RNA sequence: GGGAACGACUCGAGUAGAGUCGAAAACUCACUCAUGUGAGCAGAAAGAGUAGCAUGAUAUUUUCUUCAAGGUCUUUACCAACCUUUCAUCGUUCCCUUCUUUGCAAUAACGCUGUUUUGCAAAACCGUUACUCUAAGACUUCGGUCUUAGAGUAACAAAAGAAACAACAACAACAAC
Reactivity to 2A3 in 0.01 (KOAc 150mM, MgCl2 10mM, bicine 150mM(pH8.5), 24C), signal-to-noise 9, nucleotides 027 to 126: c010u020c030a040c020u050c010a030u090g020u040g050a070g050c050a030g180a070a170a010g130a030g030u050a010g010c040a030u030g050a030u050a140u110u130u050u040c060u100u100c060a060a030g050g010u030c050u060u170u120a060c020c020a030a040c010c010u040u080u090c040a060u020c000g000u010u000c000c020c000u030u050c030u010u010u010g000c000a020a050u100a170a030c100g130c300u190g030u040u030u010u010g000c000a000a010a030a040c070c060
Reactivity to DMS in 0.01 (KOAc 150mM, MgCl2 10mM, bicine 150mM(pH8.5), 24C), signal-to-noise 4, nucleotides 027 to 126: c020u000c030a050c050u010c120a070u020g010u000g000a140g020c180a120g030a030a030a050g000a120g020u000a110g010c080a060u000g010a060u010a030u030u030u050u010c070u010u000c090a060a080g000g010u010c040u010u000u010a050c110c120a140a100c030c040u010u000u020c030a180u010c000g000u000u000c000c000c000u020u030c100u010u000u000g010c010a010a030u020a040a030c050g000c200u030g000u000u000u000u000g010c000a020a030a030a110c190c120

Structure probing data (2A3 and DMS) for a 177-nucleotide construct. For 2A3 the reverse transcriptase was SuperScript II with manganese. Conditions: 150 mM KOAc, 10 mM MgCl2 and 150 mM bicine (pH 8.5), 24 C. DMS adducts were read by reverse transcription with MarathonRT.